Chemical mapping of a 177-nucleotide RNA with DMS and 2A3. Conditions: 150 mM KOAc, 10 mM MgCl2 and 150 mM bicine (pH 8.5), 24 C.
[RMDB]
RNA sequence: GGGAACGACUCGAGUAGAGUCGAAAAUUUGUCGCUUUUUGCCAAUUUCAGUUUGACGCUCAACACACUAUUACCGGCAAUUUUGCGAGCCAGCUCUUGUUCGACAAUCGAUAACGUGUAGAGCGGAACUUUUAGGAGCAUUCGUGCUCCUAAAAGUAAAAGAAACAACAACAACAAC
Reactivity to DMS in 0.01 (KOAc 150mM, MgCl2 10mM, bicine 150mM(pH8.5), 24C), signal-to-noise 3, nucleotides 027 to 126: u000u000u010g000u010c060g000c060u010u000u010u010u000g010c020c050a080a100u010u010u020c130a100g000u010u010u000g020a190c060g020c020u010c020a100a020c030a010c010a100c060u000a070u000u000a050c150c070g020g010c060a040a050u000u000u000u000g020c030g010a070g020c070c120a090g020c070u000c090u000u000g000u000u000c030g010a090c100a030a100u000c080g010a030u020a010a080c190g020u000g030u000a050g000a020g000c000g010g000a040
Reactivity to 2A3 in 0.01 (KOAc 150mM, MgCl2 10mM, bicine 150mM(pH8.5), 24C), signal-to-noise 2, nucleotides 027 to 126: u060u030u100g060u030c020g000c000u040u050u040u120u090g000c000c020a100a120u030u150u140c040a100g080u030u120u140g150a070c020g000c020u030c030a110a020c010a000c000a010c090u090a060u160u120a070c050c020g000g000c010a020a010u030u060u140u170g000c010g000a010g050c030c020a030g010c010u010c030u080u080g030u050u090c030g060a040c040a050a090u040c050g070a050u050a180a020c030g000u010g020u050a030g000a000g000c000g020g010a020